RNA sequence: GGGAACGACUCGAGUAGAGUCGAAAAGGCGAUGGAGAGGCCCUCUCAUUAAUGCGGAGGUGUCACGCUGACAGAAUGAUAUUAGAUGUCCGCUUCCGGUUCCAUCGCGGCGAUGAUUACAUAGGACAUCGAUUACCCAUUGGCUUCGGGGAAGCAAAUUAAUACUAUACUUCGGUAUAGUAUUAAUAAAAGAAACAACAACAACAAC
Reactivity to DMS in 0.01 (KOAc 150mM, MgCl2 10mM, bicine 150mM(pH8.5), 24C), signal-to-noise 4, nucleotides 027 to 156: g040g010c010g030a030u000g020g020a070g000a120g020g010c010c010c010u000c020u000c030a200u000u000a090a140u010g030c170g030g030a060g040g000u000g020u010c030a130c070g020c060u000g030a200c030a080g010a110a130u000g010a120u000a120u010u000a130g010a120u000g020u000c000c040g020c050u000u000c040c030g020g010u000u000c020c010a030u000c020g020c000g020g020c040g020a100u010g010a210u010u000a120c090a150u000a140g030g010a090c020a020u010c000g010a110u000u000a090c010c000c030a300u000u010g010g010c050u010u000c060g020g020g010g010a090a090g000c030a070a090
Reactivity to 2A3 in 0.01 (KOAc 150mM, MgCl2 10mM, bicine 150mM(pH8.5), 24C), signal-to-noise 5, nucleotides 027 to 156: g080g000c000g000a000u000g000g010a040g020a050g020g000c000c000c000u000c010u000c010a130u150u300a250a150u180g040c080g020g000a020g000g030u070g010u060c050a020c150g000c010u020g000a000c010a020g190a160a120u140g110a080u110a120u270u230a120g040a130u020g000u010c010c010g020c000u080u010c020c020g130g050u080u000c000c000a010u010c000g000c000g010g020c010g000a010u010g020a040u080u230a110c080a100u210a120g070g060a020c000a010u000c000g000a000u000u100a100c000c020c000a030u040u150g100g000c000u050u040c120g090g000g030g020a000a010g020c010a060a080
Chemical mapping of a 207-nucleotide RNA with DMS and 2A3. DMS adducts were read by reverse transcription with MarathonRT. Values are in units of 0.01, from 0 to 300, in steps of 10. 2A3 adducts were read by reverse transcription with SuperScript II with manganese. For 2A3, 2,997 sequencing reads were counted. The data come from the RNA Mapping Database (RMDB), library OK3TST. The reactions ran in a buffer of 150 mM KOAc, 10 mM MgCl2 and 150 mM bicine (pH 8.5), at 24 C.